[RMDB]
RNA sequence: GGGAACGACUCGAGUAGAGUCGAAAAGCGAAACUUGGUGAUCUACCCAUGGCCAGGUUGAAGCGAAGGUAACACUUCGUGGAGGACCGAACCAGUUCAUGUUGAAAAAUGUUUGGAUGAGCUGUGGUAGCGUAGGUUCAUUCGUGAACCUACGCUAAAAAGAAACAACAACAACAAC
Reactivity to DMS in 0.01 (KOAc 150mM, MgCl2 10mM, bicine 150mM(pH8.5), 24C), signal-to-noise 3, nucleotides 027 to 126: g000c070g010a140a090a030c000u010u030g040g020u000g000a070u020c080u000a220c020c020c050a100u010g030g020c000c010a160g000g000u010u000g010a280a070g000c000g020a010a020g010g000u010a140a200c230a220c040u000u000c000g080u010g020g000a190g020g000a060c050c000g080a300a160c060c000a020g020u000u020c060a040u000g010u030u010g010a030a040a080a070a240u020g030u050u010u040g000g000a020u000g000a000g010c020u010g000u010g010g010
Reactivity to 2A3 in 0.01 (KOAc 150mM, MgCl2 10mM, bicine 150mM(pH8.5), 24C), signal-to-noise 1, nucleotides 027 to 126: g080c010g060a080a100a000c080u040u040g070g000u130g000a130u050c000u150a110c030c000c050a040u010g040g000c000c020a000g030g030u000u020g060a020a000g000c060g000a000a000g010g000u030a010a010c060a020c050u000u010c040g000u010g000g060a110g070g000a010c000c000g000a040a000c000c000a030g000u030u030c050a040u080g060u150u200g120a000a060a000a000a170u170g070u020u010u000g050g030a050u040g000a000g050c000u020g000u010g070g020